Structure probing data (2A3 and DMS) for a 177-nucleotide construct.
DMS adducts were read by reverse transcription with MarathonRT.
The data come from the RNA Mapping Database (RMDB), library OK1LIB.
The RNA was probed in 150 mM KOAc, 10 mM MgCl2 and 150 mM bicine (pH 8.5) at 24 C.
[RMDB]
RNA sequence: GGGAACGACUCGAGUAGAGUCGAAAAGUCGGCUGGAUGACCUACCCGGAAUGCGUUGCCGAUCAACCAGACACCCCGAUCGAGGACGAACGCGAGGGUGACCUGCUGCAGUACUCGUCGGGAACGAACAAGCAGAGCAGUUCGCUGCUCUGCUUGUAAAAGAAACAACAACAACAAC
Reactivity to 2A3 in 0.01 (KOAc 150mM, MgCl2 10mM, bicine 150mM(pH8.5), 24C), signal-to-noise 3, nucleotides 027 to 126: g030u010c000g040g000c070u150g000g030a140u110g110a210c030c010u060a140c040c000c000g000g060a120a120u240g100c050g280u240u130g020c000c010g000a040u060c040a000a050c010c010a030g040a110c010a070c040c000c010c000g020a110u190c200g000a020g010g010a010c010g020a180a040c050g000c110g080a050g030g000g040u080g140a050c010c000u010g020c000u060g000c060a010g000u000a040c000u000c000g000u000c010g020g000g000a000a030c020g000a010
Reactivity to DMS in 0.01 (KOAc 150mM, MgCl2 10mM, bicine 150mM(pH8.5), 24C), signal-to-noise 2, nucleotides 027 to 126: g000u040c020g000g000c010u020g000g000a130u020g000a070c150c000u010a080c110c130c000g000g020a170a140u010g020c090g010u020u050g000c000c020g000a120u050c080a070a220c010c010a160g000a150c080a070c110c000c000c000g000a070u020c020g050a000g000g000a010c000g050a090a140c100g000c040g000a020g000g070g000u140g010a170c000c010u000g000c000u000g020c300a100g000u000a000c000u000c000g000u000c040g000g000g010a050a020c290g000a140